[RMDB]
Notes:
Structure probing data (2A3 and DMS) for a 177-nucleotide construct.
RNA sequence: GGGAACGACUCGAGUAGAGUCGAAAAGAUAUGGAUUGAGUGUGGCUGAUGACCCUAUUCGGAAACGAAUAGGCAAGGCCCACUUCAAUCCUAAGUCAAAAGCAACACCACUUCGGUGGUGUUGCAACCUCACUCUUUGGUUCGCCAAAGAGUGAGGAAAAGAAACAACAACAACAAC
Reactivity to 2A3 in 0.01 (KOAc 150mM, MgCl2 10mM, bicine 150mM(pH8.5), 24C), signal-to-noise 1, nucleotides 027 to 126: g030a000u060a040u160g000g010a030u030u000g000a000g030u060g000u300g030g000c010u080g060a300u150g050a130c000c000c020u020a000u010u000c010g020g000a030a070a080c010g010a000a000u000a000g000g050c010a060a070g050g010c020c020c000a000c000u110u060c000a000a000u000c000c000u020a050a010g060u000c050a000a000a070a220g000c000a000a010c000a010c000c010a010c010u020u100c300g120g000u000g000g020u000g000u000u000g020c000a000a010
Reactivity to DMS in 0.01 (KOAc 150mM, MgCl2 10mM, bicine 150mM(pH8.5), 24C), signal-to-noise 1, nucleotides 027 to 126: g010a080u000a300u010g000g000a010u060u000g010a090g010u000g000u000g080g000c010u000g030a040u020g010a250c300c010c000u010a000u010u000c000g010g000a120a070a200c000g000a010a000u020a030g000g000c010a010a080g000g060c010c000c010a000c020u000u030c010a010a000u000c000c010u010a020a070g010u010c050a150a110a150a120g000c020a010a000c000a010c010c000a000c010u000u030c220g070g000u000g010g000u000g000u000u050g010c000a020a050
For 2A3, 3,321 sequencing reads were counted. High 2A3 reactivity points to a flexible backbone, as in loops and unpaired stretches. 2A3 adducts were read by reverse transcription with SuperScript II with manganese. Reactivities are rounded to 0.1 and cut off at 0 and 3.